[RMDB]
RNA sequence: GGGAACGACUCGAGUAGAGUCGAAAAGAGUAAUCGUAGCAAAAGUAAGCAUUUCCUUUAAUCGCAGAUCCCGGAUACUGGAUAUAUUUUGCAGCCAACACGUGCAUCCAUGCAACAUUUCCUACAUAUACCCGGCUAUGCACAGCGUCAUCAUCGACAUUCGCGUAACGUUCGCGUUACGCGAAUGAAAAGAAACAACAACAACAAC
Reactivity to 2A3 in 0.01 (KOAc 150mM, MgCl2 10mM, bicine 150mM(pH8.5), 24C), signal-to-noise 1, nucleotides 027 to 156: g100a000g030u170a030a080u130c030g000u070a010g010c050a050a040a100a060g060u070a070a000g050c020a050u000u000u040c020c000u050u040u150a130a110u110c040g000c090a010g020a140u040c030c020c000g060g000a040u050a090c050u030g000g000a030u050a000u000a030u190u060u060u060g010c000a000g000c010c000a060a010c030a040c040g030u060g000c000a000u000c040c010a000u080g020c020a080a030c000a030u040u040u060c020c000u030a070c040a050u130a020u010a070c030c000c000g070g000c060u080a020u090g030c030a010c010a060g050c030g040u100c040a090u050c000a020u060c010g040a020
Conditions: 150 mM KOAc, 10 mM MgCl2 and 150 mM bicine (pH 8.5), 24 C. The record gives the reactivity of an RNA of 207 nucleotides to 2A3. For 2A3 the reverse transcriptase was SuperScript II with manganese. Values cover nucleotides 27 to 156.